[RMDB]
RNA sequence: GGGAACGACUCGAGUAGAGUCGAAAAGUUUGUGUUCGCACAAACGUGGAACCUUUGUGGGUAGGUGCUCGUUGAUCAUAUGCUAGUUCCCAUUGGGAACUUGGACCAUAUGGGAGAGCCCUACCCACUCUGGUAUGAGGCCUCGUUCGCGAGGCAAGUAAUACGUCCAGUUCGCUGGACGUAUUACAAAAGAAACAACAACAACAAC
Reactivity to DMS in 0.01 (KOAc 150mM, MgCl2 10mM, bicine 150mM(pH8.5), 24C), signal-to-noise 3, nucleotides 027 to 156: g010u000u000u000g020u000g010u000u000c300g030c020a020c010a010a020a020c030g000u000g010g010a090a100c000c000u000u000u000g030u010g010g000g030u010a010g000g020u010g040c010u000c010g030u000u010g010a080u020c010a020u000a010u010g020c010u000a050g000u000u000c000c000c010a300u010u010g060g010g010a000a020c010u000u010g020g020a120c220c010a020u000a000u000g000g010g020a060g020a040g000c020c010c000u000a010c010c000c010a000c010u000c020u000g010g000u000a050u010g000a150g030g020c000c010u000c010g040u000u000c270g020c020g010a020g030g050c000a000a070
Reactivity to 2A3 in 0.01 (KOAc 150mM, MgCl2 10mM, bicine 150mM(pH8.5), 24C), signal-to-noise 6, nucleotides 027 to 156: g000u000u010u000g020u010g010u030u130c260g060c110a010c010a000a000a010c010g010u150g120g130a050a060c000c000u010u020u010g010u000g000g000g000u000a010g000g040u290g080c010u020c010g180u240u020g000a000u010c000a000u000a000u000g020c020u010a000g000u010u010c010c000c080a230u240u300g000g000g000a010a000c030u030u050g040g040a060c090c000a010u000a000u000g000g000g000a010g000a000g000c010c000c000u000a000c000c000c000a000c000u000c000u000g010g010u060a050u170g170a080g080g060c000c010u020c010g010u100u050c150g010c030g110a000g010g000c000a010a000